Record summary: Structure probing data (DMS and 2A3) for a 177-nucleotide construct.

RNA sequence: GGGAACGACUCGAGUAGAGUCGAAAAACACAGCCAAGGGAGUGCUGUUCAAGGACGAGAAGACCGCCAACUUCUUCGCCAAGUGGGCUGUGGCUCAGGCUGUCACUGCUGCUGCCGGUGUCAUGUCCCUACUUGCGUUCUUCGGAACGCAAGUAGGAAAAGAAACAACAACAACAAC
Reactivity to DMS in 0.01 (KOAc 150mM, MgCl2 10mM, bicine 150mM(pH8.5), 24C), signal-to-noise 2, nucleotides 027 to 126: a090c090a070c030a030g000c010c010a160a120g040g000g010a080g020u020g000c020u000g010u010u020c100a080a080g000g030a060c050g020a050g010a050a030g000a060c090c070g010c100c120a070a150c030u000u000c030u010u000c080g020c030c030a080a030g050u000g000g010g010c010u000g010u000g000g020c030u000c050a030g010g010c020u000g010u000c050a070c080u000g010c140u010g000c070u000g030c030c020g000g000u000g030u010c040a030u020g010u000c040
Reactivity to 2A3 in 0.01 (KOAc 150mM, MgCl2 10mM, bicine 150mM(pH8.5), 24C), signal-to-noise 2, nucleotides 027 to 126: a010c020a000c000a000g030c020c040a060a130g190g040g020a110g030u160g000c030u030g030u050u040c090a080a120g050g020a060c020g000a030g010a090a030g060a140c000c090g040c020c030a030a050c080u060u010c030u080u070c020g060c050c040a140a090g070u090g010g000g000c030u040g030u030g070g000c000u000c030a010g070g000c010u050g050u090c020a000c080u100g010c030u050g010c030u040g060c050c010g010g040u030g040u010c020a030u090g120u080c050

The DMS profile rests on 1,785 reads. For 2A3 the reverse transcriptase was SuperScript II with manganese.